[RMDB]
RNA sequence: GGGAACGACUCGAGUAGAGUCGAAAAGAUGUGAACAGUUAACCUGACACACAGGCCUUUUAUUUAGGGCAUAAACCUCCAUGUCAAUGGUCAACCCUGUGCUUCCUUUCAUUUAGGUAACUCUGUUUUUAAAAUGUGAUAUCUUUGGGAAUUUUCACCAUAGUACGACGUUCGCGUCGUACUAUGGAAAAGAAACAACAACAACAAC
Reactivity to DMS in 0.01 (KOAc 150mM, MgCl2 10mM, bicine 150mM(pH8.5), 24C), signal-to-noise 1, nucleotides 027 to 156: g020a040u030g050u000g000a030a140c050a060g010u010u020a060a110c040c010u010g000a290c070a100c020a100c090a110g020g000c040c040u000u040u020u000a160u000u050u000a120g010g020g060c040a110u010a050a050a110c040c030u010c080c030a080u010g040u000c090a050a100u000g030g000u000c040a050a090c040c000c010u000g020u000g010c000u010u000c010c030u000u010u010c090a070u000u010u010a050g000g030u000a030a080c050u000c040u000g010u000u000u000u020u040a020a100a110a100u020g010u010g010a110u000a010u010c030u000u000u000g000g010g000a070a100u000u010u010u000c010a180
Reactivity to 2A3 in 0.01 (KOAc 150mM, MgCl2 10mM, bicine 150mM(pH8.5), 24C), signal-to-noise 3, nucleotides 027 to 156: g060a080u100g010u040g040a140a030c020a010g030u040u070a050a040c010c000u010g050a020c000a000c010a020c000a020g090g000c030c000u130u110u050u110a250u090u200u190a050g030g010g000c020a020u140a020a090a040c000c030u030c050c010a050u070g090u070c040a070a140u110g050g000u030c020a030a070c000c000c000u030g040u060g050c030u070u080c000c000u000u050u130c040a130u090u070u120a010g020g000u030a040a020c010u000c040u080g090u020u020u020u050u180a130a200a040a080u130g010u020g030a050u060a050u080c060u030u060u060g030g000g030a080a080u080u050u010u080c050a040